This 177-nucleotide RNA was probed chemically with DMS. The RNA was probed in 150 mM KOAc, 10 mM MgCl2 and 150 mM bicine (pH 8.5) at 24 C.
[RMDB]
RNA sequence: GGGAACGACUCGAGUAGAGUCGAAAAGAUAUGGAUCGAUAAGGGAGAUCCCACUCGGAAACGAGUGGUGAUCUUUGAUCUUACGAUCCUAAGUCAAAAGAUUAAUCACCUUCGGGUGAUUAAUCAACGAUUUACGGAAGUUCGCUUCCGUAAAUCGAAAAGAAACAACAACAACAAC
Reactivity to DMS in 0.01 (KOAc 150mM, MgCl2 10mM, bicine 150mM(pH8.5), 24C), signal-to-noise 1, nucleotides 027 to 126: g000a000u000a020u020g000g000a000u000c000g010a140u000a010a030g000g000g010a000g000a020u000c000c000c000a010c000u010c020g030g000a000a000a000c000g000a030g020u010g000g010u000g010a000u000c010u010u000u000g000a010u020c000u000u000a020c000g000a000u000c000c000u010a000a070g000u000c000a110a110a150a160g000a020u000u000a000a010u000c000a000c000c000u010u010c300g020g000g050u000g000a000u000u000a000a000u000c000a030a190